[RMDB]
RNA sequence: GGGAACGACUCGAGUAGAGUCGAAAAUCUCUCUUGUUCGCAAGAGAGAAAAGAACGCCAAAGUGACGCAAACUUCCGCGUCAGGAAGGCGUAACGAGGUAAAAAGGGGGAUCUUCGGAUCCCCCAACUGAUACGUCUAGUUCGCUAGACGUAUCAGAAAAGAAACAACAACAACAAC
Reactivity to DMS in 0.01 (KOAc 150mM, MgCl2 10mM, bicine 150mM(pH8.5), 24C), signal-to-noise 4, nucleotides 027 to 126: u000c000u000c000u000c000u000u000g010u010u010c190g030c000a000a000g010a010g000a020g010a030a020a050a120g010a140a050c030g020c000c010a010a100a300g000u000g010a010c000g020c010a060a110a230c220u020u010c200c120g020c030g000u000c040a010g000g010a300a150g010g010c000g010u000a040a050c150g000a110g020g020u010a020a060a040a090a080g020g000g000g000g010a000u000c000u000u010c180g020g000a010u000c000c010c000c000c000a000a000
Reactivity to 2A3 in 0.01 (KOAc 150mM, MgCl2 10mM, bicine 150mM(pH8.5), 24C), signal-to-noise 3, nucleotides 027 to 126: u010c010u000c000u010c010u010u000g020u060u050c190g030c090a000a000g010a000g010a000g000a010a000a000a000g010a020a010c000g000c000c000a040a070a000g140u020g020a000c000g000c000a030a100a260c110u200u080c100c080g010c000g020u010c000a000g010g020a070a040g020g000c000g000u000a000a010c040g030a090g060g110u150a050a070a070a110a130g000g000g000g010g000a000u000c020u030u070c170g030g020a000u000c020c000c000c000c000a000a000

Record summary: Structure probing data (DMS and 2A3) for a 177-nucleotide construct. DMS adducts were read by reverse transcription with MarathonRT. For DMS, 4,022 sequencing reads were counted. The 2A3 profile rests on 4,782 reads.